Source information
An RNA of 177 nucleotides, treated with 2A3 and DMS and read out base by base. The reactions ran in a buffer of 150 mM KOAc, 10 mM MgCl2 and 150 mM bicine (pH 8.5), at 24 C. Values cover nucleotides 27 to 126.

[RMDB]
RNA sequence: GGGAACGACUCGAGUAGAGUCGAAAACAGUUAGGCUGCGUGGGGGUCAGGGACCCAGUUGAGGAGGCAGUCUAUCUUUUCUCAGAGCUCAAGCACCAUGCUGGGAGAACCACUGCUCUCUUCAGAGCAACUCAAGAUGGUUCGCCAUCUUGAGUUGAAAAGAAACAACAACAACAAC
Reactivity to 2A3 in 0.01 (KOAc 150mM, MgCl2 10mM, bicine 150mM(pH8.5), 24C), signal-to-noise 2, nucleotides 027 to 126: c010a000g020u040u030a020g030g000c020u030g000c040g090u120g030g080g000g030g060u050c050a050g050g090g050a020c020c020c010a050g060u110u200g100a070g000g050a040g090g000c000a010g000u000c000u010a040u030c000u020u040u020u030c030u000c020a080g030a040g050c030u060c100a100a010g030c030a080c100c010a100u170g000c010u040g010g090g000a050g000a030a040c020c010a040c070u060g020c000u000c000u000c000u090u050c050a010g000a010g080
Reactivity to DMS in 0.01 (KOAc 150mM, MgCl2 10mM, bicine 150mM(pH8.5), 24C), signal-to-noise 5, nucleotides 027 to 126: c200a040g010u000u000a010g020g000c010u010g000c020g030u010g010g000g010g010g010u010c060a120g010g020g020a130c010c010c010a070g010u010u000g010a110g000g010a120g020g010c010a010g010u000c030u000a020u010c010u000u010u000u010c000u010c020a140g020a130g010c040u000c080a080a110g010c090a110c130c080a100u010g010c020u000g000g000g010a060g010a080a070c080c230a070c090u000g000c030u000c010u000c060u000u000c070a070g010a070g000